[RMDB]
RNA sequence: GGGAACGACUCGAGUAGAGUCGAAAAGUCGGAGUGGUAAAUCGUCUUCUUGUUGUGCGUUCGAGUCUUGGGCUCUGCACUUGGCCAUUUGGUUGUCCUUUCCGAAUUCUGCGGUUGAUGGGCGUCUCGGUCUGAGUAAUCGGCUUUGAGAUUUCCGCCCUUAUAACUACUUCGGUAGUUAUAAGGGAAAAGAAACAACAACAACAAC
Reactivity to DMS in 0.01 (KOAc 150mM, MgCl2 10mM, bicine 150mM(pH8.5), 24C), signal-to-noise 2, nucleotides 027 to 156: g040u010c040g010g010a110g040u000g020g000u020a040a050a100u000c040g010u000c050u000u000c050u000u000g030u000u020g010u000g010c050g000u000u000c050g020a070g000u000c040u020u000g020g020g020c040u000c050u020g010c050a050c040u000u000g020g060c020c030a120u020u000u000g010g020u020u010g020u000c040c010u000u000u020c020c010g020a030a150u000u000c090u000g040c060g010g060u000u010g010a090u000g000g030g010c120g020u000c020u010c030g010g010u000c010u000g000a100g010u010a100a170u000c020g010g010c010u000u000u010g010a090g000a170u000u000u000c010c040g000
Reactivity to 2A3 in 0.01 (KOAc 150mM, MgCl2 10mM, bicine 150mM(pH8.5), 24C), signal-to-noise 3, nucleotides 027 to 156: g090u070c030g010g020a030g020u080g040g070u130a060a060a050u060c040g070u020c000u130u020c020u070u080g060u050u060g000u030g040c050g060u050u110c070g030a020g030u010c030u090u150g070g020g010c010u000c050u010g020c000a020c000u020u040g000g000c030c010a060u100u030u120g070g000u000u040g010u030c000c010u050u050u030c020c000g060a100a140u170u020c060u130g060c030g050g040u050u070g050a090u030g010g000g000c040g040u010c020u000c020g030g020u020c060u060g030a030g070u130a050a080u020c010g000g020c000u120u110u150g020a010g000a020u050u030u050c000c010g020
The record gives the reactivity of an RNA of 207 nucleotides to DMS and 2A3. Conditions: 150 mM KOAc, 10 mM MgCl2 and 150 mM bicine (pH 8.5), 24 C. The DMS profile rests on 4,894 reads. Values cover nucleotides 27 to 156. It was measured as part of the RMDB library ARCHII. For 2A3 the reverse transcriptase was SuperScript II with manganese.